[RMDB]
RNA sequence: GGGAACGACUCGAGUAGAGUCGAAAAGUGCUUGGCGAUGAGCAGUUUAAUCAGAUUAAGCAACAGUUUCCGCAAGGACUCAGUGAAGCCCAAGAAGCCCGAAUCAGAAACAGCCGCAGUCAAGCGGACUCUAGUACCUAUUCGUAGGUACUAGAGUAAAAGAAACAACAACAACAAC
Reactivity to DMS in 0.01 (KOAc 150mM, MgCl2 10mM, bicine 150mM(pH8.5), 24C), signal-to-noise 7, nucleotides 027 to 126: g020u010g000c010u000u000g000g010c050g010a090u000g010a190g020c030a060g010u000u000u000a080a080u010c100a100g020a300u000u000a050a120g010c060a110a070c070a080g000u000u000u000c000c010g020c220a090a120g000g000a030c020u000c050a080g010u000g000a110a120g010c040c020c040a090a120g010a090a140g000c010c060c060g010a060a060u010c070a100g010a090a060a050c050a060g020c010c010g010c110a110g010u010c130a050a060g010c010g010g000
Reactivity to 2A3 in 0.01 (KOAc 150mM, MgCl2 10mM, bicine 150mM(pH8.5), 24C), signal-to-noise 4, nucleotides 027 to 126: g090u060g020c010u030u030g040g020c040g100a090u070g020a050g040c040a030g020u030u040u090a080a030u070c070a030g040a190u070u080a070a020g010c010a020a060c020a070g050u010u080u010c030c010g000c020a030a050g030g010a020c010u000c040a000g020u020g180a090a020g000c000c050c000a050a050g090a080a020g040c020c030c030g080a040a040u100c040a090g130a110a100a040c020a040g020c000c000g000c020a020g060u090c050a000a060g000c000g000g010
The record gives the reactivity of an RNA of 177 nucleotides to DMS and 2A3. DMS adducts were read by reverse transcription with MarathonRT. It was measured as part of the RMDB library OK2TRN. The reactions ran in a buffer of 150 mM KOAc, 10 mM MgCl2 and 150 mM bicine (pH 8.5), at 24 C.